[RMDB]
RNA sequence: GGGAACGACUCGAGUAGAGUCGAAAAAUGCCUUGGUGGGGUCGAUGCCAGUUGUAGUGGUGUAGCCAGGAUUUCAUGGCAUCGGCUCGGUGUUGGGAGUUCUGGUAGGUGUGAGCGUAAGCCCACACUAAUGGUCGGUAUUCGUACCGACCAUUAGAAAAGAAACAACAACAACAAC
Reactivity to DMS in 0.01 (KOAc 150mM, MgCl2 10mM, bicine 150mM(pH8.5), 24C), signal-to-noise 4, nucleotides 027 to 126: a080u010g000c020c010u000u010g020g030u000g000g010g010g020u000c010g010a020u000g000c010c010a050g000u000u000g010u010a070g010u000g010g000u000g020u010a120g020c010c010a030g010g010a080u000u000u000c030a120u010g010g010c000a010u000c010g010g000c020u000c010g010g030u000g010u000u000g010g010g010a130g010u000u010c050u000g010g010u010a080g010g010u000g010u000g010a040g010c010g000u010a090a140g010c000c000c000a020c040a080
Reactivity to 2A3 in 0.01 (KOAc 150mM, MgCl2 10mM, bicine 150mM(pH8.5), 24C), signal-to-noise 1, nucleotides 027 to 126: a020u120g000c030c060u050u090g140g030u150g000g050g020g000u050c000g000a020u000g040c000c000a030g010u080u060g100u100a170g110u030g110g020u120g030u110a050g100c000c010a030g030g060a030u040u070u090c130a130u050g010g000c020a010u010c000g040g000c020u020c000g000g010u070g000u050u010g000g020g000a100g020u070u050c000u060g040g080u090a050g030g040u020g030u030g070a020g000c010g010u010a060a000g010c000c020c000a020c010a000

Structure probing data (DMS and 2A3) for a 177-nucleotide construct.
The reactions ran in a buffer of 150 mM KOAc, 10 mM MgCl2 and 150 mM bicine (pH 8.5), at 24 C.
For 2A3, 1,591 sequencing reads were counted.